The data come from the RNA Mapping Database (RMDB), libraries RFM100 and RFMREP. This 177-nucleotide RNA was probed chemically with DMS and 2A3. Reactivities are rounded to 0.1 and cut off at 0 and 3. Values cover nucleotides 27 to 126. The reactions ran in a buffer of 150 mM KOAc, 10 mM MgCl2 and 150 mM bicine (pH 8.5), at 24 C.
RNA sequence: GGGAACGACUCGAGUAGAGUCGAAAAGGUUGGAUCGCUCGACGAUCAUGGCAGCAUCAGCGACCAAAGCAAUCCGUUUGCUAUUGAACUCCCAGCCUGGGAGAUAUCCCUGAAGCGACUGGCUCAAAUUAAGCAGGGUUUUCGAACCCUGCUUAAUAAAAGAAACAACAACAACAAC
Reactivity to DMS in 0.01 (KOAc 150mM, MgCl2 10mM, bicine 150mM(pH8.5), 24C), signal-to-noise 4, nucleotides 027 to 126: g020g010u010u000g020g000a050u000c020g000c000u020c140g010a120c030g020a070u030c040a050u000g020g000c120a080g030c110a080u000c080a070g010c060g000a080c110c030a030a060a070g000c030a050a020u020c190c120g010u030u010u000g000c020u010a110u010u010g030a080a100c020u000c010c000c020a130g010c150c110u010g020g000g000a020g000a050u020a060u010c000c020c000u000g010a110a060g000c040g020a050c030u000g000g010c050u010c070a060a070
Reactivity to 2A3 in 0.01 (KOAc 150mM, MgCl2 10mM, bicine 150mM(pH8.5), 24C), signal-to-noise 4, nucleotides 027 to 126: g090g020u060u070g020g040a160u060c010g000c020u020c060g110a110c010g030a170u050c030a020u110g090g000c060a030g030c010a070u060c010a020g010c010g030a030c030c000a120a000a030g030c020a010a050u070c050c100g100u040u070u080g000c000u010a100u150u110g060a030a010c010u040c010c000c030a050g140c040c070u090g040g020g000a060g010a020u070a040u050c010c000c000u020g050a040a010g010c020g070a120c060u040g020g000c000u020c050a020a080